[RMDB]
RNA sequence: GGGAACGACUCGAGUAGAGUCGAAAAAGCCUGGCAGCAGCGCGGCCUAUACAGAGAGGCAGGCACAGAAGUGGCGGGACAGCAAGCAUGGCGUGGGUCCCCAGGACGCCCUGCCUCACAGUUCACUUACAAGGGCCACGGCCUCCUUGCGGAACCAGAUUAGUGGCUAGUUCGCUAGCCACUAAUCAAAAGAAACAACAACAACAAC
Reactivity to 2A3 in 0.01 (KOAc 150mM, MgCl2 10mM, bicine 150mM(pH8.5), 24C), signal-to-noise 2, nucleotides 027 to 156: a000g080c000c000u010g020g000c090a030g000c010a010g070c000g000c020g030g010c020c000u060a100u050a090c090a000g080a020g000a000g260g010c010a000g000g020c120a060c040a160g270a240a090g030u030g190g040c040g070g020g000a000c000a010g020c040a020a110g080c100a150u190g030g090c080g090u120g140g100g040u030c000c020c000c040a010g050g000a020c070g020c000c000c000u000g000c000c020u000c000a000c000a000g030u050u080c050a050c170u050u130a080c040a120a110g020g030g000c020c010a010c030g100g090c010c000u000c000c010u040u030g010c000g030g050a060a040c040c000a030